Chemical mapping of a 177-nucleotide RNA with 2A3.
It was measured as part of the RMDB library OK1LIB.
High 2A3 reactivity points to a flexible backbone, as in loops and unpaired stretches.
[RMDB]
RNA sequence: GGGAACGACUCGAGUAGAGUCGAAAAGAUCAGGAAUGUCGCGGAAUUUCCCUUGCAAGUACUCUAUUCGCUCCUCCCGCGAGGUGAGGUUAGCUUGGUAGUCCGAUGGGAAAACGAGUACGUAGUGGACUCCCAGCCACUUCGGUGGCUGGGAGUCAAAAGAAACAACAACAACAAC
Reactivity to 2A3 in 0.01 (KOAc 150mM, MgCl2 10mM, bicine 150mM(pH8.5), 24C), signal-to-noise 1, nucleotides 027 to 126: g030a260u040c010a010g060g100a250a100u300g030u240c070g000c010g140g000a000a000u040u040u040c000c000c000u000u000g100c060a030a000g000u300a300c000u000c000u050a120u080u050c080g060c160u010c000c030u110c000c000c000g000c000g000a190g000g000u010g000a000g090g000u020u050a030g000c000u030u260g040g040u000a000g070u040c000c000g160a240u140g050g060g000a000a000a000a100c040g000a030g030u030a000c000g030u000a000g100u040g200
2A3 adducts were read by reverse transcription with SuperScript II with manganese.
Reactivities are given for positions 27 through 126.
The reactions ran in a buffer of 150 mM KOAc, 10 mM MgCl2 and 150 mM bicine (pH 8.5), at 24 C.